Structure probing data (2A3) for a 207-nucleotide construct.
It was measured as part of the RMDB library RNAMAK.
RNA sequence: GGGAACGACUCGAGUAGAGUCGAAAACCCUUUAUAUUCGUAUAAAGGGAAAAAAGAUAUGGAAACGUAAGAGCAACAGCCCUCCCGUCGGAAACGACCCGAGGGACAUGCUUAUCGUUUCCUAAGUCAAAAAACCAUACAGUUCGCUGUAUGGUAAGUUGACCAUUGAUUUCGAUCAAUGGUCAACAAAAGAAACAACAACAACAAC
Reactivity to 2A3 in 0.01 (KOAc 150mM, MgCl2 10mM, bicine 150mM(pH8.5), 24C), signal-to-noise 2, nucleotides 027 to 156: c000c000c000u000u020u000a010u020a010u030u070c110g000u020a000u000a000a000a000g000g040g120a190a000a000a000a000a000g000a010u010a000u010g000g000a000a010a000c010g010u030a260a210g010a050g090c130a020a180c060a230g020c000c000c000u000c000c030c010g000u000c000g000g000a000a000a000c000g000a000c000c010c010g000a000g000g010g020a000c000a080u190g000c000u010u010a040u050c040g010u000u000u000c000c000u000a000a000g000u000c030a090a060a040a110a000a000c000c000a010u020a000c000a010g040u070u160c200g040c160u000g000u000a000u010g000g000u010a010a010
For 2A3, 1,679 sequencing reads were counted.